[RMDB]
RNA sequence: GGGAACGACUCGAGUAGAGUCGAAAAUGAAGCUCUGGCACCAUCUGAUUUCUUGAAAUAGCUGUGCCUAUAUAUAAGGCACUAAAGAAAAAUAGUAAGAAAAAGAACUUUCCCAGCUACUUCAUCAGAGUUGCACUGGUAACAAAUUGACAAGGAACGAUUUAUAUGCAUUCGUGCAUAUAAAUCGAAAAGAAACAACAACAACAAC
Reactivity to 2A3 in 0.01 (KOAc 150mM, MgCl2 10mM, bicine 150mM(pH8.5), 24C), signal-to-noise 2, nucleotides 027 to 156: u080g040a090a000g040c040u040c060u100g010g000c010a010c020c010a090u000c030u010g080a100u040u070u040c000u000u040g060a070a110a100u090a080g060c100u120g020u000g000c010c030u010a010u000a010u020a000u020a130a040g010g000c000a000c010u020a030a060a040g060a010a090a050a020a030u120a050g050u030a100a110g040a150a070a040a030a030g020a020a020c020u040u030u010c000c000c000a050g010c020u020a020c020u100u060c020a120u030c030a010g010a000g050u030u050g030c060a040c120u000g030g050u070a070a010c040a080a150a110u140u130g040a040c010a040a020g050g000a050a020
Reactivity to DMS in 0.01 (KOAc 150mM, MgCl2 10mM, bicine 150mM(pH8.5), 24C), signal-to-noise 1, nucleotides 027 to 156: u000g010a110a070g000c010u040c020u010g020g040c020a080c030c020a140u010c030u000g010a170u000u010u000c000u000u050g020a070a070a090u000a070g070c100u000g000u000g040c010c000u000a140u000a120u000a200u020a150a060g010g020c010a000c010u000a020a060a100g000a020a090a030a080a170u000a140g020u000a080a130g010a100a100a130a170a180g000a050a090c080u000u000u000c000c000c000a130g010c020u000a020c030u000u010c010a040u000c070a100g020a080g020u000u000g000c040a070c080u000g020g000u000a050a130c060a010a120a150u000u020g020a110c020a070a040g020g030a100a190
Description
Structure probing data (2A3 and DMS) for a 207-nucleotide construct. The data come from the RNA Mapping Database (RMDB), library OK3TST. As a SHAPE reagent, 2A3 marks flexible, mostly unpaired nucleotides at the ribose 2'-OH. For 2A3 the reverse transcriptase was SuperScript II with manganese. The DMS profile rests on 1,682 reads. The RNA was probed in 150 mM KOAc, 10 mM MgCl2 and 150 mM bicine (pH 8.5) at 24 C.